[RMDB]
RNA sequence: GGGAACGACUCGAGUAGAGUCGAAAAGAUAUGGACGAUUCGACGAUAAGCUCCACUCGGAAACGAGUGUGAGCUUUUGACGUCGAGUCCUAAGUCAAAGAUAUAGGGCGUUCGCGCCCUAUAUCAACCUUUUUUAUAUGUUCGCAUAUAAAAAAGGAAAAGAAACAACAACAACAAC
Reactivity to DMS in 0.01 (KOAc 150mM, MgCl2 10mM, bicine 150mM(pH8.5), 24C), signal-to-noise 5, nucleotides 027 to 126: g000a040u010a240u000g000g010a030c030g010a220u010u010c010g000a010c000g000a120u000a020a010g020c000u000c000c010a000c000u000c000g010g000a080a070a120c000g000a020g010u000g010u000g010a010g020c000u000u000u000u000g020a160c040g000u000c000g010a030g000u000c000c030u000a040a140g000u000c030a110a110a130g010a010u000a000u000a010g000g000g020c000g020u010u020c240g020c010g010c000c000c000u000a000u000a000u000c000a090a120
Reactivity to 2A3 in 0.01 (KOAc 150mM, MgCl2 10mM, bicine 150mM(pH8.5), 24C), signal-to-noise 1, nucleotides 027 to 126: g020a010u060a020u140g000g000a000c020g050a040u070u090c000g010a010c010g050a070u020a300a020g010c030u030c020c010a000c020u000c010g000g010a020a030a020c010g010a000g010u000g000u060g040a010g020c010u000u000u010u010g020a000c010g000u010c010g000a000g000u000c000c000u020a060a020g060u010c050a250a040a060g020a010u000a010u010a010g030g020g000c000g010u040u100c240g040c000g000c050c040c000u000a000u000a000u000c000a000a010
This 177-nucleotide RNA was probed chemically with DMS and 2A3. For DMS the reverse transcriptase was MarathonRT. For 2A3 the reverse transcriptase was SuperScript II with manganese. Conditions: 150 mM KOAc, 10 mM MgCl2 and 150 mM bicine (pH 8.5), 24 C. For 2A3, 2,802 sequencing reads were counted.